[RMDB]
The record gives the reactivity of an RNA of 177 nucleotides to DMS and 2A3. For 2A3, 1,866 sequencing reads were counted. The RNA was probed in 150 mM KOAc, 10 mM MgCl2 and 150 mM bicine (pH 8.5) at 24 C.
RNA sequence: GGGAACGACUCGAGUAGAGUCGAAAAAACAGCUCUCCAGUGGAUUCGAUGGGCCCCAGCAAUCUUGUGAUUUAUGCAGGGAGGGUGCUUCUCCUCAGCAGCUGCCAUAGCCCGGUCGCUGGUACAUAUCAAGGGUAAACUUCGGUUUACCCUUGAUAAAAGAAACAACAACAACAAC
Reactivity to DMS in 0.01 (KOAc 150mM, MgCl2 10mM, bicine 150mM(pH8.5), 24C), signal-to-noise 2, nucleotides 027 to 126: a050a070c080a130g000c040u010c040u000c000c020a040g010u000g020g000a100u010u010c040g020a070u050g010g000g020c000c030c090c030a030g000c010a050a070u010c020u040u040g010u020g020a100u010u010u020a070u030g030c020a180g020g000g020a040g000g010g010u010g000c080u030u010c000u000c000c030u030c080a180g000c030a080g000c050u000g000c050c040a050u010a200g020c010c030c030g010g020u000c120g000c010u000g010g000u000a030c150a120u020
Reactivity to 2A3 in 0.01 (KOAc 150mM, MgCl2 10mM, bicine 150mM(pH8.5), 24C), signal-to-noise 3, nucleotides 027 to 126: a000a000c070a030g000c020u020c010u000c010c010a020g020u070g100g020a110u120u060c050g070a070u160g000g040g020c000c000c000c000a010g040c020a010a080u060c030u080u160g070u090g100a130u120u180u130a120u170g030c000a020g030g060g010a050g020g030g030u070g070c000u050u050c030u010c010c000u060c030a060g000c020a020g000c030u050g040c040c020a140u130a050g020c020c000c000g000g000u030c020g000c010u020g040g000u050a030c030a030u080